Chemical mapping of a 177-nucleotide RNA with DMS. Conditions: 150 mM KOAc, 10 mM MgCl2 and 150 mM bicine (pH 8.5), 24 C. It was measured as part of the RMDB library TTRINS.
[RMDB]
RNA sequence: GGGAACGACUCGAGUAGAGUCGAAAAGAUAUGGACGUAGCAGCGCUUAGGUUAUAUGGAGCACUAUAUUCGGAAACGAAUAUAAACUCCAUAUAACCUAAGAACUACGCUGUCUACGUCCUAAGUCGAGAAGUACCAUCUUCGGAUGGUACUUCUCAAAAGAAACAACAACAACAAC
Reactivity to DMS in 0.01 (KOAc 150mM, MgCl2 10mM, bicine 150mM(pH8.5), 24C), signal-to-noise 1, nucleotides 027 to 126: g000a150u000a300u010g000g020a000c010g040u000a010g000c000a020g020c010g000c010u000u000a000g000g000u010u000a010u000a000u000g000g000a010g040c120a110c200u000a000u000a010u000u000c000g000g000a210a070a280c000g000a020a010u000a000u000a000a140a170c010u000c000c000a000u000a000u000a000a000c000c000u010a000a000g000a090a040c160u010a300c010g020c020u000g010u000c000u000a000c040g040u000c000c000u010a030a130g000u000c060